[RMDB]
RNA sequence: GGGAACGACUCGAGUAGAGUCGAAAAACGAGCGUGCCGAACGGCUCGCCGACGCGGUGCGCGACGACUUCGGCGUGAUGCACCGCGGAGAACACCGCGCCCGCGAGCGCGGCGGCGACGAAUGCGAAAAUAGGGAUACGUUCGCGUAUCCCUAUUUAAAAGAAACAACAACAACAAC
Reactivity to DMS in 0.01 (KOAc 150mM, MgCl2 10mM, bicine 150mM(pH8.5), 24C), signal-to-noise 7, nucleotides 027 to 126: a110c070g000a100g010c010g010u000g010c020c020g010a080a140c100g010g010c040u000c020g010c000c040g010a060c010g010c000g000g010u000g010c090g020c080g010a040c030g010a150c090u010u010c120g020g020c020g010u000g010a100u000g000c030a040c020c010g020c020g020g000a080g000a110a110c120a070c010c000g000c000g010c010c000c240g010c190g000a070g000c010g000c010g000g000c020g000g020c010g010a040c080g010a090a080u010g010c060g000a090
Reactivity to 2A3 in 0.01 (KOAc 150mM, MgCl2 10mM, bicine 150mM(pH8.5), 24C), signal-to-noise 3, nucleotides 027 to 126: a020c050g010a050g050c020g000u030g020c000c010g070a170a110c060g030g020c020u010c000g010c000c000g030a010c000g000c000g010g010u020g000c030g010c020g030a030c010g070a110c040u160u130c110g140g010c040g020u090g050a150u140g020c010a010c010c020g000c000g000g000a020g010a040a020c060a010c020c000g000c020g000c010c010c010g150c080g050a080g030c010g020c010g030g000c000g000g000c010g020a030c050g040a090a060u230g060c060g060a080
Structure probing data (DMS and 2A3) for a 177-nucleotide construct. It was measured as part of the RMDB library OK2TRN. Conditions: 150 mM KOAc, 10 mM MgCl2 and 150 mM bicine (pH 8.5), 24 C.